[RMDB]
RNA sequence: GGGAACGACUCGAGUAGAGUCGAAAAUGGCCGUCCUCCGGACGGCGGGUCACCGGUCAGGCGGUUCCGUCCCACGGCGGUGACCAGCCCGAAAUCGCGCCCCGCGGUCAUAGCGGCGGUGCUCCGGUCAGUUGAACACCUUCGGGUGUUCAACUGAAAAAGAAACAACAACAACAAC
Reactivity to DMS in 0.01 (KOAc 150mM, MgCl2 10mM, bicine 150mM(pH8.5), 24C), signal-to-noise 1, nucleotides 027 to 126: u020g050g060c000c000g020u000c020c000u020c170c140g000g080a050c110g050g000c000g000g000g050u000c000a020c010c030g000g010u010c030a150g010g020c160g050g000u010u040c160c090g000u050c000c000c030a260c160g000g000c010g010g000u000g000a040c020c000a030g000c170c020c070g030a000a260a020u070c050g010c070g000c000c000c000c000g000c000g020g000u010c300a080u000a300g000c020g030g000c090g020g000u000g000c020u020c130c100g000g000
Reactivity to 2A3 in 0.01 (KOAc 150mM, MgCl2 10mM, bicine 150mM(pH8.5), 24C), signal-to-noise 2, nucleotides 027 to 126: u070g050g060c180c000g030u020c030c000u300c150c200g000g000a000c000g000g000c000g010g010g000u000c000a000c000c000g050g160u140c060a080g080g000c000g000g150u230u170c070c000g050u110c040c000c000a000c050g030g000c020g000g000u020g000a010c000c000a010g060c030c000c000g000a080a060a000u120c040g010c000g020c020c000c000c030g060c020g040g010u110c060a080u080a110g000c000g000g010c040g010g000u000g010c000u010c000c030g020g030

Overview
An RNA of 177 nucleotides, treated with DMS and 2A3 and read out base by base. For DMS the reverse transcriptase was MarathonRT. The RNA was probed in 150 mM KOAc, 10 mM MgCl2 and 150 mM bicine (pH 8.5) at 24 C.